[RMDB]
RNA sequence: GGGAACGACUCGAGUAGAGUCGAAAACAAAAGUCGUCCUAGUCGACAUACUAGUAAACAAAAGGACUUGCAUUGUCCAGAAUGCUAAACAAAAGACCUUGUACUGGUCAGAGUACUAAACAACAAAGGGAUUCUAAUACUUCGGUAUUAGAAUCCCAAAAGAAACAACAACAACAAC
Reactivity to 2A3 in 0.01 (KOAc 150mM, MgCl2 10mM, bicine 150mM(pH8.5), 24C), signal-to-noise 2, nucleotides 027 to 126: c000a000a020a000a000g080u060c050g040u020c000c020u000a000g080u040c090g070a060c000a130u190a000c000u030a000g090u060a080a010a120c080a010a050a040a020g070g000a000c000u000u030g000c020a040u000u250g060u120c020c020a020g100a060a000u040g000c060u150a260a150a000c140a090a200a000a000g010a060c000c000u060u000g000u000a020c030u020g030g010u060c050a020g020a000g090u030a000c110u150a040a220a000c000a260a000c040a160a130a050
Reactivity to DMS in 0.01 (KOAc 150mM, MgCl2 10mM, bicine 150mM(pH8.5), 24C), signal-to-noise 1, nucleotides 027 to 126: c060a000a240a180a090g040u000c040g000u000c040c000u020a000g000u050c020g000a080c300a230u060a040c000u000a000g110u080a010a010a140c160a010a020a110a040g040g010a180c000u000u010g080c040a020u030u000g000u050c040c070a110g000a050a000u000g010c030u010a030a010a060c300a060a250a060a050g000a000c030c000u000u010g000u000a000c000u000g000g000u060c250a000g000a130g030u140a000c130u000a020a060a030c080a060a120c300a040a080a050